[RMDB]
RNA sequence: GGGAACGACUCGAGUAGAGUCGAAAAUACGGGUAUUCGUACCCGUAAAAAAGAUAUGGAUUUCCGAAGAGCGAUAAGAUGUCGGAUCGGAAACGAUCCGCAUCUUUUGACGCUUGUAGAAAUCCUAAGUCAAAAAAGUCGCGAUUCGUCGCGACAACUUUUCUCAGUGUUUCGACACUGAGAAAAGAAAAGAAACAACAACAACAAC
Reactivity to DMS in 0.01 (KOAc 150mM, MgCl2 10mM, bicine 150mM(pH8.5), 24C), signal-to-noise 1, nucleotides 027 to 156: u000a030c000g010g000g030u000a010u010u000c270g020u000a020c000c000c000g010u000a010a030a050a080a020a090g050a060u010a300u030g020g010a040u000u000u000c000c000g020a130a140g000a030g040c000g020a190u000a040a010g000a010u000g030u000c040g110g000a010u000c000g020g010a240a080a160c010g030a000u000c000c000g020c000a000u000c000u000u000u000u000g000a170c060g040c020u020u000g020u000a010g000a030a030a000u000c000c000u010a010a050g010u000c020a000a020a090a180a120a080g020u000c000g000c000g000a110u020u000c230g000u000c000g040c020g000a040c000a010a030
Reactivity to 2A3 in 0.01 (KOAc 150mM, MgCl2 10mM, bicine 150mM(pH8.5), 24C), signal-to-noise 2, nucleotides 027 to 156: u070a000c000g000g000g000u000a030u040u180c230g030u050a040c010c010c010g000u020a000a010a020a000a010a030g040a020u070a060u080g000g000a020u020u020u030c100c080g080a190a070g010a040g020c030g010a040u020a090a020g010a000u010g160u300c070g000g000a000u000c000g040g020a080a070a070c010g010a000u000c000c000g000c000a000u020c010u020u010u010u010g020a010c030g010c000u010u080g050u080a010g000a000a000a000u000c000c000u010a060a010g040u040c060a030a020a000a000a050a230g070u060c060g000c000g000a010u000u100c140g050u010c020g150c000g020a010c000a000a010
Structure probing data (DMS and 2A3) for a 207-nucleotide construct. Reactivities are given for positions 27 through 156. In probing experiments dimethyl sulfate is read out at A N1 and C N3, which are open when not base-paired. The RNA was probed in 150 mM KOAc, 10 mM MgCl2 and 150 mM bicine (pH 8.5) at 24 C. Values are in units of 0.01, from 0 to 300, in steps of 10. The DMS profile rests on 3,111 reads.